RNA sequence: GGGAACGACUCGAGUAGAGUCGAAAAGGCGGGGGAGCACCACAACGGGUGGAGCCUGCGGUUUAAUUGGAUUCAACGCCGGGAAGCUUACCGGGAUCGACAGUUGUAUGAAGGCCAGGCUGAAGACUAGACACUUGCGUUUCGACGCAAGUGUCUAAAAAGAAACAACAACAACAAC
Reactivity to DMS in 0.01 (KOAc 150mM, MgCl2 10mM, bicine 150mM(pH8.5), 24C), signal-to-noise 1, nucleotides 027 to 126: g060g000c020g000g000g010g180g000a080g000c050a080c070c070a060c190a180a120c180g010g000g080u000g000g000a040g070c030c000u000g000c110g000g000u020u080u030a040a030u000u070g010g000a130u000u000c030a000a100c070g000c000c070g000g020g000a180a070g110c110u000u000a120c120c000g000g000g000a140u000c140g010a090c150a080g000u000u000g010u040a080u000g000a030a160g000g010c090c010a000g000g000c000u030g000a030a060g000a070c090